[RMDB]
RNA sequence: GGGAACGACUCGAGUAGAGUCGAAAAUUCCACCCACUGCUCGAGGAUCUCCUCCCUCCCCUUCGAGGAUUCCCCUGCGACGGGUAGGCUCAUCCUGAGACCGGGGAGCUUCGAAGAUCUCUCUAUUACGGGUACAGCUUCGGCUGUACCAAAAGAAACAACAACAACAAC
Reactivity to DMS in 0.01 (KOAc 150mM, MgCl2 10mM, bicine 150mM(pH8.5), 24C), signal-to-noise 5, nucleotides 027 to 129: u040u020c060c080a190c080c010c050a170c050u020g020c070u000c030g010a040g030g000a090u060c060u020c010c000u020c000c000c000u000c010c010c040c020u020u000c020g020a060g040g030a140u040u020c000c000c000c000u030g030c020g010a300c140g000g000g050u030a100g000g070c100u000c090a110u040c000c030u000g010a180g010a300c040c090g000g000g000g000a030g020c070u030u040c010g010a100a050g010a120u060c090u050c040u040c090u070a090u090u030a130c210g000
Reactivity to 2A3 in 0.01 (KOAc 150mM, MgCl2 10mM, bicine 150mM(pH8.5), 24C), signal-to-noise 3, nucleotides 027 to 129: u110u010c010c000a040c010c000c000a070c010u040g010c000u010c000g020a010g010g020a060u020c020u020c010c010u000c000c010c000u020c000c000c000c000u000u000c000g010a010g020g040a130u060u050c000c000c000c000u040g020c010g060a060c020g040g020g000u040a050g110g000c020u020c060a090u060c020c000u010g010a030g020a100c010c040g000g000g000g000a010g000c000u020u010c000g010a010a010g010a030u030c080u010c010u000c030u090a090u190u140a120c120g050
Overview:
This 170-nucleotide RNA was probed chemically with DMS and 2A3. For DMS, 11,501 sequencing reads were counted. 2A3 adducts were read by reverse transcription with SuperScript II with manganese.